[RMDB]
RNA sequence: GGGAACGACUCGAGUAGAGUCGAAAAAACAAGUGCACCAAGUUCAGUUAACAGACAAAUACUGCAGUGUUAAUGUAGUAGCUUGGCUUUACGCAGCAAUACUUAAUGGUUGCGCUUGGUUUGUAAAGACUCGACUAAAGUUCGCUUUAGUCGAGUCAAAAGAAACAACAACAACAAC
Reactivity to 2A3 in 0.01 (KOAc 150mM, MgCl2 10mM, bicine 150mM(pH8.5), 24C), signal-to-noise 2, nucleotides 027 to 126: a000a000c000a000a000g010u010g010c000a010c010c020a010a000g000u030u050c040a010g020u020u060a060a020c010a030g050a000c010a000a030a000u010a000c000u000g010c020a040g050u030g050u300u170a070a100u050g020u030a010g000u000a000g020c090u000u030g040g040c000u030u030u000a050c100g010c040a060g030c040a070a070u070a130c000u030u090a040a030u060g020g030u100u040g020c000g010c010u010u000g030g000u000u060u000g010u010a000a020a000
Reactivity to DMS in 0.01 (KOAc 150mM, MgCl2 10mM, bicine 150mM(pH8.5), 24C), signal-to-noise 2, nucleotides 027 to 126: a020a030c000a000a010g030u020g000c020a010c020c020a040a030g020u000u000c130a140g020u010u000a050a030c270a010g000a040c020a020a010a080u000a010c020u000g000c020a000g020u010g000u000u030a090a090u000g030u000a000g000u000a000g000c250u000u000g000g000c020u000u020u010a100c100g010c190a090g010c160a030a050u020a040c050u000u000a050a000u000g000g020u010u000g020c020g010c000u000u010g000g000u000u000u010g000u010a030a090a090